[RMDB]
RNA sequence: GGGAACGACUCGAGUAGAGUCGAAAACGCGGUGGGCCAAUCCGCACGCAAAUCGGCGGUGACCACGCGCCGGUCGGCGGUGGGCGUGGCGCCCAGUUCGGCGAGUGUGCGAGUUUUGAACUCCAUGGUUUGUGUGUUAGUUCGCUAACACACAAACAAAAGAAACAACAACAACAAC
Reactivity to 2A3 in 0.01 (KOAc 150mM, MgCl2 10mM, bicine 150mM(pH8.5), 24C), signal-to-noise 2, nucleotides 027 to 126: c060g000c060g050g010u060g010g030g000c050c000a010a020u030c020c000g040c010a020c000g020c010a020a010a040u040c000g000g000c020g000g060u040g070a300c010c010a000c020g000c010g000c010c000g040g080u300c070g110g270c020g000g010u100g090g210g030c020g000u050g010g050c020g050c000c010c010a050g000u210u210c020g000g010c010g010a010g010u060g000u010g010c060g010a110g020u050u020u040u110g070a040a010c020u000c030c010a040u060g090
Reactivity to DMS in 0.01 (KOAc 150mM, MgCl2 10mM, bicine 150mM(pH8.5), 24C), signal-to-noise 3, nucleotides 027 to 126: c080g000c080g020g010u000g000g000g020c070c050a070a060u010c040c010g000c010a050c030g020c040a030a110a100u000c050g020g020c060g000g020u000g000a220c020c020a030c040g010c010g010c000c020g000g010u010c220g000g020c010g010g020u000g020g040g050c040g040u000g020g000c030g010c020c010c120a050g020u010u000c030g010g000c010g010a300g010u000g000u000g010c030g000a030g000u000u000u010u010g010a070a030c060u010c000c040a060u010g030